Structure probing data (DMS and 2A3) for a 177-nucleotide construct. The 2A3 profile rests on 1,540 reads.
RNA sequence: GGGAACGACUCGAGUAGAGUCGAAAAGGAUCCUCUCACAGGAUUGUCUCUGUGUUCCGAAACUCCAACAGUAUUGCUUCGGGACACCCACAGCAAUACUGUGGGUAUAGAGAGUAGGAGAGGAUCGGUAAAUCCUCCUGUUCGCAGGAGGAUUUACAAAAGAAACAACAACAACAAC
Reactivity to DMS in 0.01 (KOAc 150mM, MgCl2 10mM, bicine 150mM(pH8.5), 24C), signal-to-noise 3, nucleotides 027 to 126: g000g010a000u000c010c000u000c000u000c020a160c150a100g020g000a170u010u000g030u010c010u000c010u010g010u020g040u010u000c010c010g030a040a040a040c020u000c170c090a140a050c200a100g020u000a170u010u020g000c060u010u000c110g040g010g000a070c070a070c050c000c000a040c090a010g020c080a100a080u000a300c000u000g030u000g000g000g010u000a020u010a020g000a050g000a050g000u000a120g000g000a000g000a030g000g000a010u000c000g000
Reactivity to 2A3 in 0.01 (KOAc 150mM, MgCl2 10mM, bicine 150mM(pH8.5), 24C), signal-to-noise 2, nucleotides 027 to 126: g100g030a000u010c000c020u010c000u000c010a160c000a080g240g030a190u120u240g090u010c000u000c000u020g060u000g000u070u000c000c000g020a030a020a010c020u110c100c040a110a080c010a220g120u140a140u120u190g040c030u020u020c010g010g000g040a050c000a050c000c000c000a010c000a010g010c040a000a180u080a300c000u000g020u000g000g000g000u000a000u120a000g020a000g010a020g060u060a030g100g000a000g000a000g000g000a000u000c000g010

The RNA was probed in 150 mM KOAc, 10 mM MgCl2 and 150 mM bicine (pH 8.5) at 24 C. For DMS, 1,644 sequencing reads were counted.